[RMDB]
RNA sequence: GGGAACGACUCGAGUAGAGUCGAAAAGUGCUUUUGGUGAGCAAUAUGACUCUUUAUCAGAUUUAUUAGCAUUUGGUGUAGCGCCAGCAAUGCUAAUGUAUAGCUGGAGUCUACAUGACUUAGGCCAUGGAGUGGUAUUAUUCGUAAUACCACUCCAAAAAGAAACAACAACAACAAC
Reactivity to DMS in 0.01 (KOAc 150mM, MgCl2 10mM, bicine 150mM(pH8.5), 24C), signal-to-noise 7, nucleotides 027 to 126: g010u000g010c020u000u000u010u010g020g010u000g010a040g010c050a080a090u010a110u010g000a030c010u000c010u010u010u010a130u020c060a040g000a090u010u000u000a040u010u000a020g010c010a020u000u000u000g010g020u000g010u000a150g000c170g010c010c000a040g020c230a030a010u000g010c010u000a010a030u000g020u010a030u000a060g020c070u000g010g000a030g010u010c010u000a120c180a090u000g010a070c040u000u000a090g010g010c030c060a140
Reactivity to 2A3 in 0.01 (KOAc 150mM, MgCl2 10mM, bicine 150mM(pH8.5), 24C), signal-to-noise 3, nucleotides 027 to 126: g030u040g030c010u080u080u110u130g040g030u100g060a040g000c000a010a010u090a110u140g030a040c000u040c000u040u190u110a240u210c030a060g050a140u030u080u070a020u000u110a000g010c010a010u040u000u060g020g010u070g050u100a070g080c050g000c080c000a030g040c070a040a010u040g020c000u030a070a020u060g020u010a120u060a090g030c010u040g030g010a020g020u000c000u030a030c000a090u100g080a030c010u030u080a080g010g070c010c020a040